[RMDB]
RNA sequence: GGGAACGACUCGAGUAGAGUCGAAAACUACCAUAAUCAUGUUGAACAAAUGAUCAAUGUCGCGAUUUUCAUCUUCGAUUUCGCCGCCCGUAGCAUUUAGCAGCAAUAUCUGUUUAGAGUUGUCGAACAGACAGAGAACAAAUAAAAUGACGUAUAAUACUUCUUCUGAUUUCGAUCAGAAGAAGUAAAAAGAAACAACAACAACAAC
Reactivity to DMS in 0.01 (KOAc 150mM, MgCl2 10mM, bicine 150mM(pH8.5), 24C), signal-to-noise 3, nucleotides 027 to 156: c020u010a300c020c020a160u020a080a130u020c020a050u010g010u020u000g020a100a120c120a070a100a070u020g000a060u010c050a050a080u010g020u020c040g030c040g010a080u010u010u000u000c030a110u000c080u010u000c060g030a130u000u000u000c030g040c040c050g000c040c050c040g020u010a100g030c040a080u000u000u000a090g010c090a070g010c050a080a130u000a080u000c020u000g010u000u000u000a070g020a110g010u000u000g040u000c030g000a050a070c050a060g000a050c030a070g010a140g000a080a130c050a040a040a090u010a040a050a080a080u000g020a100c070g000u000a070u000a090a180
Reactivity to 2A3 in 0.01 (KOAc 150mM, MgCl2 10mM, bicine 150mM(pH8.5), 24C), signal-to-noise 3, nucleotides 027 to 156: c030u060a070c010c000a070u150a060a090u100c080a050u060g040u080u070g060a060a010c030a020a110a050u040g020a030u120c080a070a080u060g070u090c020g000c030g040a040u030u000u110u090c040a090u020c040u190u120c060g050a040u030u020u000c020g030c060c010g020c020c010c010g050u070a040g010c000a020u000u010u110a010g020c030a010g000c000a010a080u020a010u140c020u010g070u020u040u080a100g030a030g040u030u060g070u070c040g000a020a020c030a010g040a010c030a000g050a010g010a080a030c060a080a100a010u160a080a090a020a030u060g050a020c020g050u100a030u000a190a090

Chemical mapping of a 207-nucleotide RNA with DMS and 2A3. For DMS, 6,243 sequencing reads were counted. It was measured as part of the RMDB library OK3TST. For DMS the reverse transcriptase was MarathonRT.